Chemical mapping of a 177-nucleotide RNA with DMS and 2A3. For DMS the reverse transcriptase was MarathonRT.

RNA sequence: GGGAACGACUCGAGUAGAGUCGAAAACAGGGUCCGCGUUCCAUCCUUUCUUACCUGAUGGCCGGCAUGGUCCCAGCCUCCUCGCUGGCGCCGGCUGGGCAACAUUCCGAGGGGACCGUCCCUCGGUGAUAUUAUAAUUGUUCGCAAUUAUAAUAUCAAAAGAAACAACAACAACAAC
Reactivity to DMS in 0.01 (KOAc 150mM, MgCl2 10mM, bicine 150mM(pH8.5), 24C), signal-to-noise 4, nucleotides 027 to 126: c110a100g010g010g000u000c020c040g010c060g000u000u010c020c020a070u000c040c050u010u000u000c050u010u000a110c050c060u000g000a140u000g020g020c020c000g010g000c040a090u010g010g000u010c300c000c010a050g010c000c070u000c090c060u000c140g000c010u000g010g020c220g010c010c030g010g000c010u010g000g030g000c040a060a070c090a110u020u000c000c000g000a020g000g000g000g000a140c170c240g010u000c000c000c000u000c000g010g020u010
Reactivity to 2A3 in 0.01 (KOAc 150mM, MgCl2 10mM, bicine 150mM(pH8.5), 24C), signal-to-noise 3, nucleotides 027 to 126: c020a030g070g020g030u060c050c010g030c030g060u060u020c010c010a060u030c050c000u100u190u050c010u120u130a150c040c040u080g100a140u080g140g050c020c000g010g000c040a110u160g040g020u100c030c020c000a010g010c000c030u080c010c020u070c070g010c030u040g030g000c040g010c030c000g040g020c000u000g040g010g040c020a080a030c010a100u160u030c010c000g010a010g010g020g040g080a180c040c040g190u150c000c000c000u000c000g000g000u000
The RNA was probed in 150 mM KOAc, 10 mM MgCl2 and 150 mM bicine (pH 8.5) at 24 C.
For 2A3 the reverse transcriptase was SuperScript II with manganese.
For DMS, 4,737 sequencing reads were counted.